[RMDB]
RNA sequence: GGGAACGACUCGAGUAGAGUCGAAAAGAAAGAAAGAAAGCAUUUCGAGCGGCUUUCAACGACGAUAUCAACCGACAACUCACACUUUUGCGUGUUGAUAUGUUGUUUGAAUGCCCCUUGAAUUGAAUAAAUAGUAACGCUUCGGCGUUACUAUUUAAAAAGAAACAACAACAACAAC
Reactivity to 2A3 in 0.01 (KOAc 150mM, MgCl2 10mM, bicine 150mM(pH8.5), 24C), signal-to-noise 9, nucleotides 027 to 126: g090a010a040a000g110a020a080a010g100a050a090a000g070c020a020u030u010u010c000g000a000g000c010g000g000c000u000u010u010c000a000a000c010g040a000c040g060a010u000a000u010c000a000a000c010c010g230a170c060a040a050c060u150c130a130c050a130c180u060u110u100u110g000c020g000u300g000u060u000g000a000u010a000u010g000u000u000g070u020u060u090g000a000a000u010g010c010c010c010c000u000u000g000a000a010u030u030g020a040a050
Reactivity to DMS in 0.01 (KOAc 150mM, MgCl2 10mM, bicine 150mM(pH8.5), 24C), signal-to-noise 6, nucleotides 027 to 126: g030a080a080a110g010a130a090a120g000a120a070a110g020c010a020u000u000u000c000g010a000g010c300g010g010c000u000u000u010c010a010a000c000g000a000c000g000a040u000a000u000c000a000a000c010c000g020a090c080a020a030c300u040c250a100c300a130c300u010u000u010u010g020c000g000u030g010u000u000g010a010u000a010u000g000u000u000g010u000u020u020g010a010a000u000g010c000c000c100c000u000u000g000a010a010u010u000g010a080a120